[RMDB]
RNA sequence: GGGAACGACUCGAGUAGAGUCGAAAACAGCCCGGAUUCUGGUUUCGUUGCGAUGACUUGCCGCCCAGUUGUUGUCGUGGUGACUGGGCGGAAUUAUUUCUACGAUCGAGUUUGUUUGCACCAUGUCGGUGUGAGUGCAGGAGCCGAGCAAUAACGACGCAUAGAUAACGUUCGCGUUAUCUAUGCGAAAAGAAACAACAACAACAAC
Reactivity to DMS in 0.01 (KOAc 150mM, MgCl2 10mM, bicine 150mM(pH8.5), 24C), signal-to-noise 1, nucleotides 027 to 156: c020a270g010c040c010c010g020g000a070u000u000c000u000g040g020u000u010u000c040g040u000u000g000c060g030a080u010g010a070c040u000u010g010c040c000g020c020c000c010a090g020u000u000g060u000u000g030u000c190g010u020g030g040u000g020a020c000u000g000g040g020c000g040g000a010a000u020u000a040u000u010u000c000u000a070c040g000a080u000c000g020a100g000u020u000u000g030u000u000u000g020c010a040c000c010a150u000g020u020c100g010g050u000g010u000g040a020g060u000g030c050a050g010g040a090g050c010c050g030a080g030c030a140a060u010a040a180c060g010a180
Reactivity to 2A3 in 0.01 (KOAc 150mM, MgCl2 10mM, bicine 150mM(pH8.5), 24C), signal-to-noise 3, nucleotides 027 to 156: c030a020g030c010c000c040g040g000a070u150u010c050u110g060g060u070u020u120c040g030u060u040g000c040g050a070u060g010a040c050u050u160g050c000c000g000c000c000c000a010g000u010u020g020u070u070g100u120c160g090u130g040g020u060g010a000c000u010g000g000g000c020g000g000a000a000u000u000a000u000u040u020c010u020a030c010g050a010u110c030g010a040g080u040u030u170g100u070u070u030g060c000a000c040c010a050u130g090u220c150g040g030u070g030u050g040a030g010u080g000c000a030g000g030a010g000c000c040g020a000g050c050a100a070u160a080a060c050g060a000

Chemical mapping of a 207-nucleotide RNA with DMS and 2A3.
The data come from the RNA Mapping Database (RMDB), library ARCHII.
The reactions ran in a buffer of 150 mM KOAc, 10 mM MgCl2 and 150 mM bicine (pH 8.5), at 24 C.